[RMDB]
RNA sequence: GGGAACGACUCGAGUAGAGUCGAAAAUCAUAGUCGAUGGCCGUAAGCUUCUCCAGGACCGCGGUGUAGAAGUUUCUAUACGCGAGCAUCUCUCGCACUAGCGAGUCAGAGUGCUCCAGGCGGUAUCGCAGCAGACGGACCAGUAUGUCUACGUCCACUCUAAGCAAGUGUUCGCACUUGCUUAGAGAAAAGAAACAACAACAACAAC
Reactivity to 2A3 in 0.01 (KOAc 150mM, MgCl2 10mM, bicine 150mM(pH8.5), 24C), signal-to-noise 3, nucleotides 027 to 156: u080c030a040u040a040g070u050c050g080a080u040g020g000c020c010g000u010a010a050g020c030u080u050c060u120c090c070a060g020g080a010c020c000g020c000g000g000u010g020u020a010g010a160a120g100u150u300u020c010u010a020u000a040c070g020c100g030a000g010c010a010u000c010u000c000u000c010g020c070a150c230u080a070g000c010g000a000g020u030c030a010g030a020g120u100g000c000u000c000c010a030g100g000c000g050g000u040a060u110c070g000c060a000g000c000a010g040a100c040g010g040a110c010c010a010g070u100a050u190g040u020c050u050a060c040g040u000c040c000a020
Reactivity to DMS in 0.01 (KOAc 150mM, MgCl2 10mM, bicine 150mM(pH8.5), 24C), signal-to-noise 1, nucleotides 027 to 156: u000c050a200u020a070g030u000c020g000a180u000g040g010c030c000g050u000a130a170g000c050u000u000c010u000c000c070a120g000g020a020c000c070g000c020g020g060u010g060u030a000g000a130a300g010u000u000u000c010u020a050u000a060c080g020c010g020a040g020c020a110u020c030u000c010u010c020g020c030a080c280u030a150g030c030g000a040g090u030c140a110g010a050g020u000g000c000u000c020c040a040g070g010c000g000g000u000a040u020c040g050c050a020g070c010a020g020a070c020g010g030a030c030c010a090g000u000a070u010g010u010c000u020a080c070g000u000c050c030a120